[RMDB]
RNA sequence: GGGAACGACUCGAGUAGAGUCGAAAAAUUUCAUUCUUUUCCCCCACAGAUUGAAAUCUUAGUGCCUUAGUGGGAGAAGCUGACAAACUAAGGAAAGCAUUUCUGUUCGCUUGCAAGUCAUGAAGGAGGGAGAAGACUUAUUCGUAAGUCUUCUCCCAAAAGAAACAACAACAACAAC
Reactivity to DMS in 0.01 (KOAc 150mM, MgCl2 10mM, bicine 150mM(pH8.5), 24C), signal-to-noise 2, nucleotides 027 to 126: a020u010u000u000c020a040u010u000c020u000u000u050u010c040c000c010c010c030a140c220a020g010a030u020u000g000a020a050a050u000c050u020u010a150g000u010g020c050c080u000u000a010g020u000g000g000g040a100g000a050a100g020c050u000g000a090c080a080a100a050c050u000a060a030g000g000a140a090a120g000c080a060u000u030u000c070u000g020u010u000c120g000c030u000u000g020c080a100a070g010u010c100a100u000g060a100a080g000g000a150